[RMDB]
RNA sequence: GGGAACGACUCGAGUAGAGUCGAAAAAGUCAGAGGGCGCUACCAUGCAAACUAGGGCUGGCUGCUCUUGCACAGAAUCACAUCUCGAUAAUUGUCAGUGCAAGAAGGACAAUUAUACCAUUUAAUGAAAACGUUUACCUGUUCGCAGGUAAACGAACAUACUCCGAAACUUCGGUUUCGGAGUAUGAAAAGAAACAACAACAACAAC
Reactivity to DMS in 0.01 (KOAc 150mM, MgCl2 10mM, bicine 150mM(pH8.5), 24C), signal-to-noise 2, nucleotides 027 to 156: a060g000u010c040a110g000a110g000g010g040c230g020c090u000a060c050c050a140u040g030c050a080a150a180c160u000a160g030g020g040c050u000g000g000c040u020g030c000u000c030u000u010g000c020a120c020a170g000a120a200u000c060a090c050a140u000c050u000c040g010a070u000a030a010u000u000g010u000c020a300g030u000g010c050a070a130g000a110a130g000g000a030c050a000a030u000u000a050u000a110c110c040a100u000u000u020a170a090u000g020a050a050a100a120c010g000u000u010u010a000c000c000u000g000u000u020c300g030c010a040g000g000u000a000a000a000c000g000a020a120
Reactivity to 2A3 in 0.01 (KOAc 150mM, MgCl2 10mM, bicine 150mM(pH8.5), 24C), signal-to-noise 6, nucleotides 027 to 156: a000g030u010c020a000g020a020g060g030g010c020g000c020u100a220c080c080a100u210g010c040a060a070a080c030u080a050g040g090g020c020u010g020g010c010u040g010c000u000c010u000u000g000c010a000c000a010g130a090a090u160c040a050c020a200u040c060u050c080g050a030u010a030a010u020u010g010u010c010a000g010u020g010c010a010a010g010a010a010g020g000a000c010a010a000u020u010a040u060a080c020c040a140u130u180u250a160a160u220g100a060a040a010a010c010g000u000u000u000a000c000c000u010g000u030u040c200g010c060a000g000g000u000a000a000a000c000g000a010a000
Description:
Chemical mapping of a 207-nucleotide RNA with DMS and 2A3. The data come from the RNA Mapping Database (RMDB), library M2RFOK. Conditions: 150 mM KOAc, 10 mM MgCl2 and 150 mM bicine (pH 8.5), 24 C. For 2A3, 4,478 sequencing reads were counted.